[RMDB]
RNA sequence: GGGAACGACUCGAGUAGAGUCGAAAACUUACGUGUGGCUGCUGUAUAUCUGAAUCGCUAUUCAAUGAUUUAUGCAGGGAAACUUCGAACAAGCAAACUGCGUGUCCCAUCUGUCAGCGAGAAAAUGCGUUAUCGAUGCUUUCGAGCAUCGAUAACGAAAAGAAACAACAACAACAAC
Reactivity to DMS in 0.01 (KOAc 150mM, MgCl2 10mM, bicine 150mM(pH8.5), 24C), signal-to-noise 2, nucleotides 027 to 126: c030u000u010a050c120g030u000g050u000g010g000c020u000g010c010u000g000u000a070u000a100u000c050u030g000a050a180u000c100g000c090u000a170u000u010c070a010a070u000g000a050u010u020u010a040u000g000c010a020g000g000g020a130a120a090c040u000u000c050g030a070a230c180a050a030g000c030a030a190a240c040u000g000c030g020u000g000u000c030c020c000a030u000c080u010g000u010c110a030g000c030g000a020g010a080a030a130a110u000g000
Reactivity to 2A3 in 0.01 (KOAc 150mM, MgCl2 10mM, bicine 150mM(pH8.5), 24C), signal-to-noise 2, nucleotides 027 to 126: c010u100u090a040c070g110u090g020u010g120g000c000u010g000c000u020g070u050a050u030a040u150c020u010g050a030a010u000c070g000c050u070a100u050u110c030a070a040u090g080a100u010u060u110a030u060g000c000a010g000g050g000a030a140a020c020u040u070c070g050a080a010c020a110a020g050c020a030a030a040c020u020g020c010g000u030g020u010c070c020c000a030u050c040u050g070u010c020a020g010c010g010a040g080a080a080a060a030u170g080